[RMDB]
RNA sequence: GGGAACGACUCGAGUAGAGUCGAAAAAACUGAUGAGAGUGUCUUGGUGUUCUAAAUGUUUUGUGUUUUUUUGCAGAAAAGCCACAGAAUCAAGGGAGUGUAUAAAUACUGAUAUUUUAUUUGGGUGUGUUAUACAUGCAUUCAUCCAUUCACCAAAUCCAGUACGCUUAUUCGUAAGCGUACUGGAAAAAGAAACAACAACAACAAC
Reactivity to 2A3 in 0.01 (KOAc 150mM, MgCl2 10mM, bicine 150mM(pH8.5), 24C), signal-to-noise 2, nucleotides 027 to 156: a000a000c060u060g000a000u100g010a000g000a000g110u030g040u030c040u000u010g000g020u000g010u100u020c040u050a060a160a070u050g030u010u030u070u030g020u040g040u000u040u010u010u040u040u040g010c010a010g060a090a010a000a000g010c020c000a000c020a060g070a090a070u060c010a050a060g010g110g000a030g010u050g040u040a040u090a090a100a050u070a040c010u020g010a040u020a150u190u040u070u090a130u080u120u040g000g000g000u000g000u000g010u000u000a090u040a160c090a060u090g070c010a040u050u010c000a000u000c070c000a010u070u100c060a000c060c080a040a100a050
Reactivity to DMS in 0.01 (KOAc 150mM, MgCl2 10mM, bicine 150mM(pH8.5), 24C), signal-to-noise 1, nucleotides 027 to 156: a100a080c080u000g050a050u000g000a090g010a100g020u000g000u010c020u000u000g020g020u000g000u010u010c060u000a170a070a050u000g000u000u000u000u000g010u000g010u000u020u000u040u000u020u000g030c060a280g000a050a050a020a080g020c090c030a060c030a070g010a100a010u000c080a070a140g020g000g010a160g030u000g030u000a030u000a020a010a070u000a230c040u000g000a090u000a100u000u000u020u000a140u020u050u000g010g000g010u000g010u000g010u010u010a000u010a060c020a070u010g010c040a070u000u000c030a120u000c030c000a120u010u000c040a070c030c020a040a060a180